Conditions: 150 mM KOAc, 10 mM MgCl2 and 150 mM bicine (pH 8.5), 24 C.
Chemical mapping of a 177-nucleotide RNA with 2A3 and DMS.
The DMS profile rests on 86,008 reads.
[RMDB]
RNA sequence: GGGAACGACUCGAGUAGAGUCGAAAACACGCAGCCGUCACGUGCUAGCCAUGCAGCGCGUGGGUCAGGACACCGUGCUGAAGUGGCGGAAGCGUCGGUGUCACGUUGACCGAUUGCGCGACACGACGCAGGUUCGGAGCUUCGGCUUCGGACUUGCAAAAGAAACAACAACAACAAC
Reactivity to 2A3 in 0.01 (KOAc 150mM, MgCl2 10mM, bicine 150mM(pH8.5), 24C), signal-to-noise 9, nucleotides 027 to 126: c040a000c020g020c010a010g020c000c010g030u030c000a000c010g020u020g010c020u020a020g020c010c010a050u100g010c020a010g000c000g000c000g000u020g010g000g030u010c010a010g020g020a000c000a000c000c000g010u020g000c000u040g020a090a020g020u020g040g010c000g000g020a010a000g010c000g030u010c000g000g000u000g000u000c020a020c070g050u020u050g010a000c000c000g040a060u040u190g000c000g000c000g010a000c020a000c030g080a010c060
Reactivity to DMS in 0.01 (KOAc 150mM, MgCl2 10mM, bicine 150mM(pH8.5), 24C), signal-to-noise 9, nucleotides 027 to 126: c060a090c080g010c030a060g010c030c020g000u010c020a070c010g010u010g000c020u010a090g010c050c070a090u040g000c090a080g010c020g010c010g010u010g000g010g010u010c010a070g010g000a020c010a020c010c010g030u000g000c000u000g000a150a110g010u010g000g000c020g000g000a180a030g000c010g000u010c010g010g010u000g000u000c000a060c100g010u020u010g000a030c010c010g000a040u010u030g010c010g010c020g000a110c150a080c110g010a130c170